[RMDB]
Structure probing data (DMS) for a 177-nucleotide construct. The reactions ran in a buffer of 150 mM KOAc, 10 mM MgCl2 and 150 mM bicine (pH 8.5), at 24 C. For DMS the reverse transcriptase was MarathonRT.

RNA sequence: GGGAACGACUCGAGUAGAGUCGAAAAGAUAUGGACCCAGAAGGACUAAGCUUGCUCGUUGAAAGUCCCUCAAUCGGAAACGAUUGAGGGACUGGAGAGCAAGAACGCGUCCCUGGGUCCUAAGUCAGCUAAGCUGUAUGUUCGCAUACAGCUUAGCAAAAGAAACAACAACAACAAC
Reactivity to DMS in 0.01 (KOAc 150mM, MgCl2 10mM, bicine 150mM(pH8.5), 24C), signal-to-noise 1, nucleotides 027 to 126: g010a040u000a300u000g020g020a040c010c000c010a000g000a260a170g060g000a020c000u000a300a190g000c000u010u020g000c020u000c000g030u000u030g010a300a250a070g000u000c000c000c000u000c000a000a020u010c000g010g000a100a030a160c000g010a000u000u000g000a020g020g010g020a010c010u020g000g000a070g000a030g000c000a020a000g000a020a040c140g040c250g010u000c000c000c000u000g000g000g000u000c000c000u000a020a150g010u000c050a160